[RMDB]
RNA sequence: GGGAACGACUCGAGUAGAGUCGAAAAGAGAGUAGUAUCUUCACGCAUUCUCGGAAUUGAACCAUUGUGAAGCAACGGAGGCGACCUACCUGCCGUGUAAUUUAAGUCGUCACAGAGUGACAACGGCGAUCUUUAGACCUUUCGAGGUCUAAAGAUCAAAAGAAACAACAACAACAAC
Reactivity to 2A3 in 0.01 (KOAc 150mM, MgCl2 10mM, bicine 150mM(pH8.5), 24C), signal-to-noise 5, nucleotides 027 to 126: g040a010g010a020g010u200a020g010u020a120u080c020u010u040c020a010c030g000c000a020u060u000c010u000c020g030g080a160a150u140u150g070a060a050c010c010a050u050u120g010u010g030a030a010g030c030a040a010c040g040g010a020g020g000c030g030a100c000c010u030a040c030c010u050g080c010c010g000u020g020u030a020a040u040u070u050a110a040g050u050c020g010u010c030a020c060a100g290a090g150u060g030a030c010a030a010c060g030g020c040
Reactivity to DMS in 0.01 (KOAc 150mM, MgCl2 10mM, bicine 150mM(pH8.5), 24C), signal-to-noise 5, nucleotides 027 to 126: g010a040g000a030g010u010a100g020u010a070u020c010u000u010c040a050c070g020c060a050u000u000c000u010c010g000g000a110a130u000u000g000a130a260c030c020a090u020u010g000u000g000a030a040g010c270a050a040c060g010g000a070g010g030c030g000a070c080c070u010a080c090c050u000g010c010c010g010u000g010u020a050a120u010u000u000a090a090g000u000c090g010u000c000a100c060a170g010a140g000u000g020a020c050a100a020c030g000g010c100

This 177-nucleotide RNA was probed chemically with 2A3 and DMS. For DMS the reverse transcriptase was MarathonRT. For 2A3, 5,681 sequencing reads were counted. 2A3 adducts were read by reverse transcription with SuperScript II with manganese.